[RMDB]
RNA sequence: GGGAACGACUCGAGUAGAGUCGAAAAUGUGUCUCCUUCGGGAGACACAAACGCUCGCAGCCCGAGGCCGCACGGGCAAGGCAGCGGCCAGCCAGCGAGCUAUGUGUUAUCAAUUCGUUGAUAACAAUAAUAUGUAUUAUUUCGAUAAUACAUAUUAAAAAGAAACAACAACAACAAC
Reactivity to 2A3 in 0.01 (KOAc 150mM, MgCl2 10mM, bicine 150mM(pH8.5), 24C), signal-to-noise 2, nucleotides 027 to 126: u060g000u000g000u000c000u030c010c010u030u080c180g060g000g010a000g000a000c000a000c000a000a010a000c030g000c000u000c010g000c000a010g020c000c010c030g040a050g010g000c010c000g040c020a040c070g110g110g040c090a050a060g130g000c060a030g040c000g000g010c000c000a000g030c020c010a000g000c000g010a000g000c000u020a070u090g100u010g010u000u000a010u010c010a020a020u060u100c190g040u080u010g000a000u010a000a000c000a010a000
Reactivity to DMS in 0.01 (KOAc 150mM, MgCl2 10mM, bicine 150mM(pH8.5), 24C), signal-to-noise 5, nucleotides 027 to 126: u000g020u000g010u000c000u000c000c010u000u010c210g030g020g010a010g000a000c000a000c010a010a080a080c200g010c000u000c010g010c000a160g010c020c030c010g000a080g000g000c000c000g030c010a110c110g020g020g030c170a060a080g000g020c090a100g010c010g020g000c010c010a070g010c060c100a190g000c000g000a010g010c010u000a010u010g010u000g000u000u000a000u000c000a010a040u000u010c170g010u000u000g000a020u000a010a010c000a040a100